[RMDB]
Chemical mapping of a 177-nucleotide RNA with 2A3 and DMS. The 2A3 profile rests on 1,378 reads. The DMS profile rests on 734 reads.
RNA sequence: GGGAACGACUCGAGUAGAGUCGAAAAUGGUGGUUACUACGUCAAACCUGGAGGUACCAGUAGCGGAGAUGCCACCACUGCAUAUGCCAAUAGUGUCUUUAACAUUUUGCAGGCGACAACUGCUAAUGGAUCAUACAUUGUUCGCAAUGUAUGAUCCAAAAGAAACAACAACAACAAC
Reactivity to 2A3 in 0.01 (KOAc 150mM, MgCl2 10mM, bicine 150mM(pH8.5), 24C), signal-to-noise 2, nucleotides 027 to 126: u060g000g010u010g000g000u040u080a120c020u000a010c000g060u080c070a160a110a120c010c010u000g010g010a090g060g160u250a120c000c030a010g010u020a020g000c000g000g020a030g010a070u080g000c020c000a000c000c010a000c000u000g000c010a040u070a030u170g000c000c020a070a080u120a090g170u150g070u060c050u060u120u070a090a070c020a050u050u110u060u080g040c000a010g010g050c040g050a030c060a030a020c020u030g010c030u030a010a130u070
Reactivity to DMS in 0.01 (KOAc 150mM, MgCl2 10mM, bicine 150mM(pH8.5), 24C), signal-to-noise 1, nucleotides 027 to 126: u010g000g080u000g000g010u000u000a200c020u010a030c010g000u000c080a100a180a160c290c020u000g010g070a290g010g000u020a120c000c010a020g000u000a130g000c040g010g000a070g000a280u000g000c050c000a000c000c000a030c010u000g000c040a010u030a090u020g000c000c100a000a090u020a090g010u010g010u000c060u010u010u000a150a170c100a040u000u000u010u010g010c010a010g010g010c020g000a020c040a120a070c010u010g000c000u010a030a090u000